[RMDB]
RNA sequence: GGGAACGACUCGAGUAGAGUCGAAAAAUGUGCGGCAAAGAAACAUUGUUUAUGCAAAGGCACUUCGCAAUGUGUGCUCAAACAUUGCUUAUUCAAACACGCUUCACAAUGUGCGACAAAGCAACAUAAAACGUUUAGUACUUCGGUACUAAACGAAUCAUAGAUGAAUCUUCGGAUUCAUCUAUGAAAAAGAAACAACAACAACAAC
Reactivity to DMS in 0.01 (KOAc 150mM, MgCl2 10mM, bicine 150mM(pH8.5), 24C), signal-to-noise 3, nucleotides 027 to 156: a140u000g010u000g020c020g000g010c100a080a080a100g020a190a070a070c040a060u010u000g010u000u000u000a080u010g030c030a080a070a140g000g020c000a030c040u000u000c130g020c090a120a100u010g000u000g050u000g020c020u000c080a100a100a050c020a020u000u000g030c020u000u000a070u010u000c070a140a160a000c040a050c040g000c040u000u000c110a030c060a060a080u010g010u000g000c070g000a280c090a080a040a060g020c000a030a030c040a060u010a070a070a080a140c010g010u000u010u000a000g010u010a010c000u000u000c300g010g020u000a000c000u000a000a000a000c000g010a010a060
Reactivity to 2A3 in 0.01 (KOAc 150mM, MgCl2 10mM, bicine 150mM(pH8.5), 24C), signal-to-noise 8, nucleotides 027 to 156: a010u100g010u040g040c050g030g000c070a110a060a070g080a060a140a020c030a050u040u040g050u050u140u100a120u150g040c050a070a060a080g150g000c020a000c000u070u050c050g000c040a030a040u030g020u000g000u020g030c050u110c200a040a050a000c020a020u010u000g000c000u060u110a110u090u100c050a040a070a000c070a010c120g000c000u030u020c020a000c010a030a040u030g010u030g030c020g050a040c090a030a080a020g040c020a020a090c000a040u200a100a120a020a020c010g000u000u000u000a000g000u000a000c000u010u040c210g080g000u000a000c000u010a000a000a000c000g000a000a030